[RMDB]
RNA sequence: GGGAACGACUCGAGUAGAGUCGAAAAUAUGGGGCCCACCCCACCCUCCAUGGGGCAGUUCUGGCCCCUAAGGCCCCCGAGAGGCCCUGGUCAUUAGAGUGCGGCCAUACCGAGAGCAGGCGAGGAGGCCGCUCUUUAACUUCGGUUAAAGAGCGGCAAAAGAAACAACAACAACAAC
Reactivity to 2A3 in 0.01 (KOAc 150mM, MgCl2 10mM, bicine 150mM(pH8.5), 24C), signal-to-noise 1, nucleotides 027 to 126: u150a160u080g010g000g010g000c000c040c030a060c000c000c000c010a030c030c000c010u000c020c010a060u030g000g040g030g000c020a030g030u250u130c160u200g080g000c000c000c000c000u000a000a000g040g020c020c020c050c030c000g110a090g010a020g140g000c050c030c000u010g050g000u000c010a000u000u040a020g040a020g180u080g000c030g030g050c030c000a010u030a020c020c000g040a050g020a000g140c060a000g100g000c000g030a010g040g010a000g040
Reactivity to DMS in 0.01 (KOAc 150mM, MgCl2 10mM, bicine 150mM(pH8.5), 24C), signal-to-noise 2, nucleotides 027 to 126: u020a070u010g010g010g010g010c030c020c100a120c030c010c010c030a080c090c030c030u000c080c040a250u000g000g000g010g020c080a060g000u020u010c190u000g020g010c000c000c000c000u000a020a060g010g000c040c020c000c020c050g020a160g000a140g010g020c020c000c010u000g000g010u000c060a100u000u010a140g010a100g010u000g010c060g020g000c020c050a060u000a120c090c020g010a120g010a100g010c010a060g010g000c030g000a080g010g010a120g010

An RNA of 177 nucleotides, treated with 2A3 and DMS and read out base by base. For DMS, 1,777 sequencing reads were counted. Values cover nucleotides 27 to 126. For 2A3, 1,159 sequencing reads were counted. For 2A3 the reverse transcriptase was SuperScript II with manganese.